The record gives the reactivity of an RNA of 207 nucleotides to 2A3. Conditions: 150 mM KOAc, 10 mM MgCl2 and 150 mM bicine (pH 8.5), 24 C. It was measured as part of the RMDB library OK3TST. For 2A3 the reverse transcriptase was SuperScript II with manganese. The 2A3 profile rests on 1,334 reads.

RNA sequence: GGGAACGACUCGAGUAGAGUCGAAAAUGCCCUCUGAAUGGCAGAGCAUGUCCACGGCUAGAGAGAGUUUUUGGGCAGAGAGACACUGGUUCGUGUAGGAAUUGAGACAGGUGGGCCUGAGGUGGUAAGGGCCUAGGAUAUCAGUGGGGCACCCACCGUCAGCCUAUUGGUUCGCCAAUAGGCUGACAAAAGAAACAACAACAACAAC
Reactivity to 2A3 in 0.01 (KOAc 150mM, MgCl2 10mM, bicine 150mM(pH8.5), 24C), signal-to-noise 2, nucleotides 027 to 156: u140g020c000c000c000u020c010u000g070a120a110u070g070g040c030a000g010a020g080c070a060u040g010u050c030c000a030c090g040g000c060u070a010g000a010g000a000g000a040g110u030u010u030u190u110g030g020g000c050a000g010a000g000a000g010a030c000a010c090u040g020g050u160u160c050g010u040g040u090a060g010g060a110a010u080u070g030a050g020a030c010a010g020g010u020g040g000g010c000c020u040g010a030g060g000u060g000g050u070a040a050g020g030g000c000c000u060a070g000g030a050u060a020u110c020a020g020u130g050g020g000g010c050a050c000c000c000a020c040c010